[RMDB]
Overview:
Source: RMDB library RNAMAK, as collected in RNAgym. Chemical mapping of a 207-nucleotide RNA with 2A3. For 2A3 the reverse transcriptase was SuperScript II with manganese.

RNA sequence: GGGAACGACUCGAGUAGAGUCGAAAAUACCGGGUUCGCCCGGUAAAAAAAUCCUAAGUCUCUUUGUCUAUAAUCCAUAUUUGUCAGUCGGAAACGACUUGGAUUUAAUAUGGGUAGACGGGAGAGAUAUGGAAAAAAACAGGGAUUCGUCCCUGAAACCUCUAUGUAAGUUCGCUUACAUAGAGGUAAAAGAAACAACAACAACAAC
Reactivity to 2A3 in 0.01 (KOAc 150mM, MgCl2 10mM, bicine 150mM(pH8.5), 24C), signal-to-noise 1, nucleotides 027 to 156: u110a030c020c030g000g000g030u040u180c110g050c010c030c000g110g000u000a030a030a030a030a030a030a030u160c000c000u000a260a000g000u030c000u020c000u070u250u300g000u300c300u300a100u300a120a220u080c000c000a000u000a000u000u000u000g000u000c020a020g000u000c000g000g110a090a040a020c030g020a000c050u000u030g070g000a000u300u000u000a000a000u000a060u000g000g000g020u000a000g000a000c020g020g030g000a020g000a000g000a000u000a000u170g040g160a000a000a000a000a000a000a140c000a000g040g020g000a000u010u140c090g060u020c030c000c000u000g000a020a000